RNA sequence: GGGAACGACUCGAGUAGAGUCGAAAAUUACGUGUGUAAGCAUGCAGGCUCAUGGGAUGAGAGCCUUAAAAGAUAGUUCCGAACAAUAAUUGGCGAAGAAUCUUACGCCAUGGCUGCUUAAUUACGAACUAAGUUUGUAAUAAUGAGCGUUGAGUGGGUCAAAGGUAUAGUUCGCUAUACCUUUGACAAAAGAAACAACAACAACAAC
Reactivity to DMS in 0.01 (KOAc 150mM, MgCl2 10mM, bicine 150mM(pH8.5), 24C), signal-to-noise 2, nucleotides 027 to 156: u000u030a010c000g030u000g010u000g000u020a170a190g070c020a060u020g020c020a050g000g010c000u010c010a080u000g000g010g010a120u000g020a100g020a040g010c000c000u000u000a020a060a100a140g000a090u000a160g020u000u010c000c010g010a110a090c080a100a090u000a080a210u000u000g000g010c060g010a120a150g000a050a140u000c070u000u000a170c030g000c010c010a030u000g000g010c100u000g000c000u000u000a080a120u000u000a010c020g020a010a020c020u000a060a180g030u000u000u000g010u030a010a040u000a100a160u020g000a020g020c020g030u000u000g020a100g040u000g000g000
Reactivity to 2A3 in 0.01 (KOAc 150mM, MgCl2 10mM, bicine 150mM(pH8.5), 24C), signal-to-noise 3, nucleotides 027 to 156: u180u130a070c040g000u040g010u010g030u080a070a060g070c030a030u070g020c050a010g020g000c010u000c000a010u020g010g010g020a010u070g020a020g000a000g030c000c000u020u090a040a050a000a010g040a030u020a010g020u000u030c010c020g030a090a020c030a040a020u200a150a130u090u020g000g000c030g040a060a010g070a150a130u080c050u150u080a030c020g000c000c000a000u000g040g000c060u080g020c000u120u020a080a050u040u000a000c010g030a010a010c030u070a180a120g040u000u000u000g000u000a000a000u050a050a110u110g030a010g010c040g010u020u070g020a110g050u110g040g060